[RMDB]
RNA sequence: GGGAACGACUCGAGUAGAGUCGAAAAGAAGUUGUGUUCGCACAACUUCAAAAGCUAGUAGGUACUGGGCAAGUAGUACCUUGUAGUAGCCCGUUCAAGUAAAAAUCAACCUCUUCGGAGGUUGAAAGAAACCAUAAUGCUUCGGCAUUAUGGUUUCAAAAGAAACAACAACAACAAC
Reactivity to DMS in 0.01 (KOAc 150mM, MgCl2 10mM, bicine 150mM(pH8.5), 24C), signal-to-noise 1, nucleotides 027 to 126: g000a010a030g000u000u010g040u000g010u000u040c220g010c000a010c000a020a030c000u020u000c000a010a070a130a190g020c020u000a040g030u000a000g010g000u000a000c020u000g000g010g000c180a130a210g000u000a020g010u000a020c000c000u000u000g030u000a020g030u000a050g020c000c000c010g020u010u000c160a090a120g010u010a010a070a090a110a080u000c000a010a020c000c000u000c000u000u000c220g040g000a010g000g010u000u000g000a000a030a080
Reactivity to 2A3 in 0.01 (KOAc 150mM, MgCl2 10mM, bicine 150mM(pH8.5), 24C), signal-to-noise 1, nucleotides 027 to 126: g000a010a010g010u010u030g000u010g000u100u090c250g050c100a000c000a020a000c000u000u000c010a020a020a000a000g010c000u010a000g000u010a000g070g000u000a000c010u030g130g110g010c150a120a010g090u030a000g010u000a100c030c020u000u010g090u010a000g010u040a010g010c000c010c000g010u120u200c180a220a020g000u150a080a130a090a000a130u030c000a010a010c000c000u000c020u040u170c150g040g000a000g000g060u010u010g000a000a000a000

An RNA of 177 nucleotides, treated with DMS and 2A3 and read out base by base. Source: RMDB library M2PK50, as collected in RNAgym. DMS adducts were read by reverse transcription with MarathonRT. Reactivities are rounded to 0.1 and cut off at 0 and 3. The 2A3 profile rests on 856 reads. Conditions: 150 mM KOAc, 10 mM MgCl2 and 150 mM bicine (pH 8.5), 24 C. For DMS, 1,042 sequencing reads were counted.